[RMDB]
RNA sequence: GGGAACGACUCGAGUAGAGUCGAAAAGAGGACACACCUGGAAAACACAUCUGGCAUUUUCCUUCCCAUGUCUCCUUCAGGGCAGAGGCAAGGAGCCUGGCCCUUAGUCCCUGCUAAUGGAUCAUAACUGGAAGAUGCUAAUUCCACCCAGACCUCAAGGUACUACGGAAUUCGUUCCGUAGUACCUAAAAGAAACAACAACAACAAC
Reactivity to 2A3 in 0.01 (KOAc 150mM, MgCl2 10mM, bicine 150mM(pH8.5), 24C), signal-to-noise 2, nucleotides 027 to 156: g040a010g010g030a020c060a000c030a020c220c020u020g000g050a060a060a070a040c110a020c000a090u070c170u110g020g000c000a000u020u000u010u020c000c000u050u050c000c070c020a010u030g060u020c130u000c060c010u080u060c150a080g060g070g000c000a020g020a050g090g000c000a010a050g050g030a010g060c060c140u130g130g010c020c040c030u000u010a020g050u120c000c010c000u020g010c010u060a150a070u130g010g000a010u040c010a020u020a120a040c090u060g000g000a000a000g000a020u010g000c000u010a010a130u040u030c000c020a080c030c020c020a030g050a090c010c010u020c070a000